[RMDB]
RNA sequence: GGGAACGACUCGAGUAGAGUCGAAAAAGAGCCGACGAUCCUUCCAACCUUCCAACCUUCCAACCUUCCAACCUUCCAACCUUCCAAUCUACUCGAGAGGAGGAGGAGGAGGAGGAGGAGGACAUAAGACAUAUCUAACGUUCGCGUUAGAUAUGUCAAAAGAAACAACAACAACAAC
Reactivity to 2A3 in 0.01 (KOAc 150mM, MgCl2 10mM, bicine 150mM(pH8.5), 24C), signal-to-noise 2, nucleotides 027 to 126: a000g070a010g040c020c000g000a020c020g040a070u000c000c000u040u000c010c020a050a060c030c020u050u000c040c010a070a080c020c030u070u050c010c040a110a090c030c020u090u010c020c000a090a080c030c000u030u000c000c020a090a080c040c000u090u080c020c010a020a070u030c010u050a060c020u040c050g020a020g010a020g000g040a030g040g000a050g020g020a040g000g070a070g020g060a040g010g050a040g020g050a020g010g010a000c010a100u180a080a050
Reactivity to DMS in 0.01 (KOAc 150mM, MgCl2 10mM, bicine 150mM(pH8.5), 24C), signal-to-noise 2, nucleotides 027 to 126: a080g020a110g020c000c010g030a050c110g000a140u000c020c030u000u000c020c070a080a180c110c080u000u000c010c050a110a240c110c010u010u020c030c020a140a080c030c020u020u020c040c030a050a130c060c020u000u020c010c010a070a140c070c020u000u000c020c040a170a140u010c000u000a070c050u000c020g000a010g030a230g000g010a110g000g020a130g020g020a100g020g000a110g000g000a110g000g000a160g010g000a070g000g030a300c230a030u010a020a070